Chemical mapping of a 207-nucleotide RNA with 2A3. The data come from the RNA Mapping Database (RMDB), library RNAMAK. 2A3 adducts were read by reverse transcription with SuperScript II with manganese. The reactions ran in a buffer of 150 mM KOAc, 10 mM MgCl2 and 150 mM bicine (pH 8.5), at 24 C.

[RMDB]
RNA sequence: GGGAACGACUCGAGUAGAGUCGAAAACCGUAGGGAAUGAUCUAGAGCUUGGAUUUAUACCGAAGCUACAUUCGAAAGAGUGUAGCUAAGGUAUUGUCAGCUCUAGCGUAUUCCCUAAACGGAAAGGCAACAGUAACGUUCGCGUUACUGUUGCCAAGUCAGUGUGUACCUUCGGGUACACACUGACAAAAGAAACAACAACAACAAC
Reactivity to 2A3 in 0.01 (KOAc 150mM, MgCl2 10mM, bicine 150mM(pH8.5), 24C), signal-to-noise 1, nucleotides 027 to 156: c000c000g020u010a010g060g020g010a040a000u010g020a060u060c010u020a000g000a000g020c050u130u190g200g010a100u300u300u070a010u010a010c030c000g010a020a010g000c000u000a000c000a000u010u000c000g060a070a100a050g000a050g010u010g000u000a000g000c000u000a010a000g000g020u000a000u000u000g000u000c000a010g000c000u000c010u000a000g000c000g000u050a000u010u020c010c000c000u000a020a090a000c030g030g040a130a080a140g000g000c010a000a000c000a000g000u000a000a000c000g040u090u070c300g010c030g190u010u000a000c010u000g000u000u000g000c000c000a000a000